[RMDB]
RNA sequence: GGGAACGACUCGAGUAGAGUCGAAAAUCUGACUGCUGGAAUUAGUGAUUCCCCUUUGGCUGGGACUGGUUUGAAUGCUCCCUUUAUGUGUGGGCAUCAGCUGAACUUUGUCUGGCUUUCCUUUUUGCUGUAACAGGACAACACUGAGUUUAAUGCCCCUAACACCACUAUUCGUAGUGGUGUUAGGAAAAGAAACAACAACAACAAC
Reactivity to DMS in 0.01 (KOAc 150mM, MgCl2 10mM, bicine 150mM(pH8.5), 24C), signal-to-noise 1, nucleotides 027 to 156: u010c040u000g020a120c020u000g040c080u000g030g020a060a140u000u010a070g030u000g010a250u000u000c050c010c010c040u000u040u000g010g020c030u000g010g030g000a100c040u000g030g000u020u000u020g020a050a070u000g030c020u000c000c000c010u010u000u000a090u020g010u010g080u020g020g020g040c000a060u000c030a020g010c060u000g000a040a040c070u000u000u000g010u010c010u010g020g020c050u000u000u010c010c000u000u000u000u010u000g030c040u000g010u010a060a150c020a190g000g010a110c080a050a070c000a110c030u010g010a110g030u000u000u010a050a130u000g000c040c080
Reactivity to 2A3 in 0.01 (KOAc 150mM, MgCl2 10mM, bicine 150mM(pH8.5), 24C), signal-to-noise 2, nucleotides 027 to 156: u060c030u050g090a090c020u070g020c030u060g000g080a060a080u080u050a140g040u070g120a110u040u060c000c010c000c010u040u060u120g010g020c020u030g000g000g040a020c020u050g060g030u130u160u070g100a110a020u040g010c020u070c000c000c000u030u140u070a160u110g180u020g020u140g000g000g000c000a010u010c020a040g020c000u030g030a050a050c020u070u120u100g060u030c030u030g000g000c000u000u050u100c000c000u040u100u020u060u110g050c040u020g010u080a060a030c010a050g030g050a020c000a090a000c030a070c070u080g040a050g070u070u070u060a090a060u120g010c000c040

Record summary: This 207-nucleotide RNA was probed chemically with DMS and 2A3. For 2A3, 1,623 sequencing reads were counted. 2A3 adducts were read by reverse transcription with SuperScript II with manganese. For DMS the reverse transcriptase was MarathonRT. Source: RMDB library OK3TST, as collected in RNAgym.